The record gives the reactivity of an RNA of 177 nucleotides to 2A3 and DMS. Values are in units of 0.01, from 0 to 300, in steps of 10. 2A3 adducts were read by reverse transcription with SuperScript II with manganese. For DMS, 5,061 sequencing reads were counted.
RNA sequence: GGGAACGACUCGAGUAGAGUCGAAAACACAGGACUUUGCCGCCGGCUGGGACGUGGCACGCAAGUACAUUGAUCUUGGUGCCGCUGACUUUAUCGAAUCGGUGUUCCGUGGCGCGACCGCUGAUUACAGCACAACGUAAUUCGUUACGUUGUGCUGAAAAGAAACAACAACAACAAC
Reactivity to 2A3 in 0.01 (KOAc 150mM, MgCl2 10mM, bicine 150mM(pH8.5), 24C), signal-to-noise 2, nucleotides 027 to 126: c040a000c010a040g030g050a050c040u120u180u220g010c020c020g020c000c000g030g020c030u060g010g030g000a020c030g020u060g000g000c030a010c050g300c020a000a020g020u070a060c060a290u120u300g090a120u160c010u000u010g010g000u000g010c000c020g010c020u010g020a000c010u150u180u100a220u140c040g030a080a030u160c020g060g000u030g070u070u010c020c020g020u040g030g010c060g020c030g090a070c020c020g010c060u040g040a120u120u150a060
Reactivity to DMS in 0.01 (KOAc 150mM, MgCl2 10mM, bicine 150mM(pH8.5), 24C), signal-to-noise 5, nucleotides 027 to 126: c050a090c090a100g000g010a080c100u010u010u000g040c030c050g010c140c020g000g000c100u000g010g010g000a290c230g010u000g000g010c010a010c010g000c040a000a010g020u000a090c150a220u010u010g000a090u000c010u000u010g010g030u000g000c010c000g010c020u010g000a190c030u010u000u020a070u000c050g010a070a060u000c020g010g020u010g010u000u000c020c010g020u000g010g000c040g010c070g010a120c060c030g020c070u000g000a100u010u000a150